Conditions: 150 mM KOAc, 10 mM MgCl2 and 150 mM bicine (pH 8.5), 24 C. The record gives the reactivity of an RNA of 207 nucleotides to 2A3 and DMS. 2A3 adducts were read by reverse transcription with SuperScript II with manganese. Source: RMDB library RNAMAK, as collected in RNAgym.
RNA sequence: GGGAACGACUCGAGUAGAGUCGAAAAGGGGUCCACGGUGUUCUGUACUACCCACCGCUAUGAACUACCUCUGAAGCCUCCACGGAGGCAUAGCGAGGUACAGAGCCCGUGGACGGAGGCACCCAAACAUUAUUAUGUACUUCGGUACAUAAUAAUGGAUGAUUUAAAGAUUCGUCUUUAAAUCAUCAAAAGAAACAACAACAACAAC
Reactivity to 2A3 in 0.01 (KOAc 150mM, MgCl2 10mM, bicine 150mM(pH8.5), 24C), signal-to-noise 4, nucleotides 027 to 156: g100g010g030g010u010c020c010a000c000g010g010u230g000u070u020c000u010g000u010a020c000u080a100c070c170c100a120c190c040g000c010u010a010u030g030a130a140c100u100a110c220c000u000c000u010g030a110a030g020c000c000u000c010c010a010c020g010g000a000g010g000c000a000u000a000g000c000g010a040g000g020u000a010c000a000g000a000g010c000c000c000g000u010g000g000a000c000g000g000a000g010g000c010a050c010c010c010a030a050a020c010a000u000u000a000u000u000a000u000g000u000a000c010u040u070c300g090g000u000a000c000a000u010a000a000u000a000a000u010g000
Reactivity to DMS in 0.01 (KOAc 150mM, MgCl2 10mM, bicine 150mM(pH8.5), 24C), signal-to-noise 2, nucleotides 027 to 156: g020g000g000g050u000c000c010a020c010g020g020u010g060u000u000c050u000g000u010a070c030u000a040c030c020c000a300c090c010g000c010u010a000u020g010a100a130c090u000a260c030c010u000c010u000g010a100a150g000c050c010u000c020c060a300c130g060g010a050g010g010c000a010u000a000g030c030g010a190g060g000u000a010c000a020g020a100g000c030c000c010g010u000g010g000a050c000g040g000a030g020g040c020a090c010c010c000a120a080a300c000a000u000u000a000u000u010a000u010g000u010a010c000u000u000c300g090g040u000a000c000a010u010a000a010u010a000a000u010g000